An RNA of 207 nucleotides, treated with 2A3 and read out base by base. 2A3 is a SHAPE reagent: it acylates the 2'-hydroxyl of flexible nucleotides of all four kinds. Values cover nucleotides 27 to 156. The reactions ran in a buffer of 150 mM KOAc, 10 mM MgCl2 and 150 mM bicine (pH 8.5), at 24 C.
RNA sequence: GGGAACGACUCGAGUAGAGUCGAAAAGCAUCGACUGUUCGCAGUCGAUGCAAAAAAGCGUACUACUAAGCAUUACCGACGCGAAACUCCCAAAUAGGAGGAGUCGAAAUGAACUACUUAGUAUCGCAAAAAAGUAGUUCUGUUCGCAGAACUACAACCUAGAGACUACCUUCGGGUAGUCUCUAGGAAAAGAAACAACAACAACAAC
Reactivity to 2A3 in 0.01 (KOAc 150mM, MgCl2 10mM, bicine 150mM(pH8.5), 24C), signal-to-noise 2, nucleotides 027 to 156: g040c010a010u000c000g000a000c000u040g040u100u100c230g000c130a010g000u000c010g010a010u000g020c030a010a010a010a010a010a010g010c010g050u130a030c000u000a000c010u010a010a000g000c000a000u060u010a190c110c000g010a000c000g020c020g070a120a140a120c010u060c020c000c050a170a300a240u230a080g020g020a000g020g020a050g000u020c000g010a000a010a000u080g010a130a010c040u110a050c000u300u010a000g030u000a020u300c090g000c000a000a110a000a000a000a110g010u000a000g000u000u020c000u000g010u010u060c290g000c070a000g000a000a020c000u000a000c010a030a000